[RMDB]
Notes: Structure probing data (2A3 and DMS) for a 177-nucleotide construct. Conditions: 150 mM KOAc, 10 mM MgCl2 and 150 mM bicine (pH 8.5), 24 C. The data come from the RNA Mapping Database (RMDB), library OK1LIB. For DMS, 9,744 sequencing reads were counted.

RNA sequence: GGGAACGACUCGAGUAGAGUCGAAAAACUAUACAUUUCGAAAAAUUCUUCUAGUGAACCUGCGCCACCAGGAGCCAUGACAAAUGCAUCUGCAAGUUCUGCCAUUUUAUUUUUACGUUCAUGCAUAAAUCACUGACUAAUUCGUUAGUCAGUGAUUAAAAGAAACAACAACAACAAC
Reactivity to 2A3 in 0.01 (KOAc 150mM, MgCl2 10mM, bicine 150mM(pH8.5), 24C), signal-to-noise 7, nucleotides 027 to 126: a000c030u060a040u130a160c080a150u060u110u160c060g050a070a040a030a080a100u100u030c040u050u020c040u070a040g020u020g070a040a040c010c020u040g020c030g010c010c010a030c000c010a030g020g050a010g010c020c000a040u090g040a080c040a040a120a020u080g020c000a030u010c030u030g030c030a050a020g020u050u040c010u030g030c030c020a020u010u090u060u060a180u070u120u020u090u070a040c050g010u000u040c030a050u100g060c030a060u080a090
Reactivity to DMS in 0.01 (KOAc 150mM, MgCl2 10mM, bicine 150mM(pH8.5), 24C), signal-to-noise 5, nucleotides 027 to 126: a120c040u020a060u020a080c120a100u010u010u000c030g000a020a130a060a040a090u010u010c030u000u010c030u020a080g010u010g010a100a090c040c040u010g000c070g020c030c010a020c030c010a070g000g010a080g010c040c050a060u000g010a070c080a060a080a060u010g010c040a050u010c060u010g010c030a060a060g000u000u010c030u000g010c010c030a050u010u010u010u000a040u020u020u010u010u020a090c120g000u000u000c080a030u010g020c100a050u020a030